Source: RMDB library OK1LIB, as collected in RNAgym. The record gives the reactivity of an RNA of 177 nucleotides to 2A3. The reactions ran in a buffer of 150 mM KOAc, 10 mM MgCl2 and 150 mM bicine (pH 8.5), at 24 C.
RNA sequence: GGGAACGACUCGAGUAGAGUCGAAAAUAGAGUUGGGGAGGUCUUGCUGUUGCCUAAGCUGGAGUGCAGCAUUGCAAUCCUAGUUCACCACAGCCUCCAACUCCUAGGCUUAGGCAGUCCUCUUGCCGGCUGUGGCUUAGUUCGCUAAGCCACAGCCAAAAGAAACAACAACAACAAC
Reactivity to 2A3 in 0.01 (KOAc 150mM, MgCl2 10mM, bicine 150mM(pH8.5), 24C), signal-to-noise 1, nucleotides 027 to 126: u170a030g020a020g000u020u000g070g000g000g010a100g100g070u040c040u120u260g000c020u080g020u210u080g000c000c000u020a020a000g010c010u020g050g010a010g020u040g020c000a010g030c030a080u130u280g000c000a030a020u000c010c020u110a090g040u080u100c100a160c230c000a060c030a070g000c000c000u070c000c000a000a000c000u020c000c000u140a170g010g010c000u000u000a000g000g010c000a000g040u010c000c020u000c030u010u080g070c000c030